[RMDB]
RNA sequence: GGGAACGACUCGAGUAGAGUCGAAAAGCGCGACUGCGUGCCCGUGGCGAACAGGUGGCAUUUCUUGGCUUGCUGGAUACCUGGCCGCCAGAAACGCAAAACUGGCAGGAAAAAGAAGCUAAUGGUCUGAUCAAACGACAUUCGUGUCGUUUGAUCAAAAAGAAACAACAACAACAAC
Reactivity to 2A3 in 0.01 (KOAc 150mM, MgCl2 10mM, bicine 150mM(pH8.5), 24C), signal-to-noise 1, nucleotides 027 to 126: g000c060g010c060g220a220c130u250g010c020g060u040g020c000c000c000g050u080g020g050c040g000a080a030c040a000g100g010u030g040g060c120a080u020u110u050c020u080u140g100g000c020u040u060g010c020u030g040g140a080u190a160c000c000u020g000g000c010c000g000c000c000a010g010a090a100a010c080g000c020a070a080a010a110c030u040g070g000c030a050g010g000a060a080a000a030a000g050a070a000g020c060u060a080a040u180g000g060u080c020
Reactivity to DMS in 0.01 (KOAc 150mM, MgCl2 10mM, bicine 150mM(pH8.5), 24C), signal-to-noise 1, nucleotides 027 to 126: g010c060g000c020g000a140c120u000g040c030g040u000g000c040c020c020g030u010g010g010c000g010a080a090c030a020g010g020u000g000g000c020a090u000u000u000c080u000u030g020g010c110u000u000g030c040u000g000g000a160u020a040c050c010u000g000g010c030c120g040c000c000a000g010a090a060a080c160g010c140a090a040a040a030c110u010g000g010c030a010g000g010a080a030a060a110a160g020a030a100g020c040u000a070a020u010g020g020u000c060
Structure probing data (2A3 and DMS) for a 177-nucleotide construct.
2A3 adducts were read by reverse transcription with SuperScript II with manganese.
It was measured as part of the RMDB library OK2TRN.
The 2A3 profile rests on 828 reads.
The reactions ran in a buffer of 150 mM KOAc, 10 mM MgCl2 and 150 mM bicine (pH 8.5), at 24 C.
As a SHAPE reagent, 2A3 marks flexible, mostly unpaired nucleotides at the ribose 2'-OH.
The DMS profile rests on 995 reads.